[RMDB]
RNA sequence: GGGAACGACUCGAGUAGAGUCGAAAAGCAAAGUAAUUUGCGCAGCCUUUAAGGGAUGUUACUCAUGCCACGAGAAAUUCAAUAUAUAAGAGCUCUCGUCUAUUGCAAGAUAUAAGUUACUGAGCAUGUUAUGUUGGAAAGAUAACAUGCUGUAGUACUCGUAAUCUGUGUUCGCACAGAUUACGAGAAAAGAAACAACAACAACAAC
Reactivity to DMS in 0.01 (KOAc 150mM, MgCl2 10mM, bicine 150mM(pH8.5), 24C), signal-to-noise 1, nucleotides 027 to 156: g030c020a040a040a090g020u020a100a260u030u010u010g030c010g000c070a080g020c000c010u000u030u010a130a040g000g000g000a080u010g010u030u010a030c100u000c030a130u000g070c050c100a060c030g000a020g000a090a050a190u000u000c020a110a200u010a150u030a230u000a130a120g030a040g000c080u020c000u000c000g060u000c080u000a040u000u000g010c050a100a130g020a100u030a040u020a130a120g000u000u010a060c070u020g080a040g000c000a000u010g030u000u000a050u000g020u000u040g030g000a060a100a270g000a030u000a020a010c000a020u000g030c000u000g020u010a030g060u000a100
Reactivity to 2A3 in 0.01 (KOAc 150mM, MgCl2 10mM, bicine 150mM(pH8.5), 24C), signal-to-noise 7, nucleotides 027 to 156: g010c030a000a020a000g020u140a090a240u040u030u030g010c030g010c030a030g040c000c020u090u140u160a100a110g040g000g000a040u050g010u080u080a070c030u030c060a020u120g020c010c010a020c020g020a020g030a020a060a040u150u080c040a130a010u100a040u070a020u080a300a040g010a020g020c010u000c000u010c020g050u010c070u110a150u080u190g020c040a070a020g040a060u070a030u050a170a040g030u030u010a010c020u040g000a000g000c000a000u010g000u000u010a040u020g240u180u050g060g050a060a030a030g080a010u000a010a000c000a000u000g000c010u000g020u020a010g000u000a030

The record gives the reactivity of an RNA of 207 nucleotides to DMS and 2A3. The reactions ran in a buffer of 150 mM KOAc, 10 mM MgCl2 and 150 mM bicine (pH 8.5), at 24 C. For 2A3 the reverse transcriptase was SuperScript II with manganese. DMS adducts were read by reverse transcription with MarathonRT. The data come from the RNA Mapping Database (RMDB), library ARCHII.